Annotation
The data come from the RNA Mapping Database (RMDB), library OK2TRN. Chemical mapping of a 177-nucleotide RNA with DMS and 2A3. DMS adducts were read by reverse transcription with MarathonRT. The 2A3 profile rests on 1,034 reads.
RNA sequence: GGGAACGACUCGAGUAGAGUCGAAAAGUGAGUACUUCGAGACCUACGGCGAGGUGCUGAUGGCCCAGAUCAAGAAGGACACCAAGUCGGGCCAGUCCAAGGGCUUCGGUUUCGUGCGCUUCGGCUCCAAAGACCAUGCAUUCGUGCAUGGUCUUUGAAAAGAAACAACAACAACAAC
Reactivity to DMS in 0.01 (KOAc 150mM, MgCl2 10mM, bicine 150mM(pH8.5), 24C), signal-to-noise 4, nucleotides 027 to 126: g020u000g030a090g030u020a040c010u010u000c020g000a240g000a090c050c020u000a080c080g030g000c000g010a040g010g000u000g020c060u000g010a080u000g000g020c010c010c000a200g000a080u020c150a100a090g010a080a050g000g010a050c030a050c020c060a030a050g010u010c020g000g000g000c020c020a070g020u020c120c250a070a130g010g000g010c020u010u010c020g040g010u000u000u000c260g000u000g010c120g000c040u010u000c040g000g010c100u010c060
Reactivity to 2A3 in 0.01 (KOAc 150mM, MgCl2 10mM, bicine 150mM(pH8.5), 24C), signal-to-noise 1, nucleotides 027 to 126: g090u080g070a030g120u100a010c020u000u040c010g100a100g020a170c000c000u000a030c020g180g010c030g000a040g030g010u070g070c040u130g020a060u050g040g050c030c000c000a000g050a090u090c060a080a150g030a040a070g100g040a000c010a000c070c020a070a060g020u040c020g020g050g000c040c030a020g050u000c040c020a030a050g130g040g000c030u300u270c050g060g030u060u020u020c020g010u030g040c040g030c070u040u050c010g000g000c010u120c020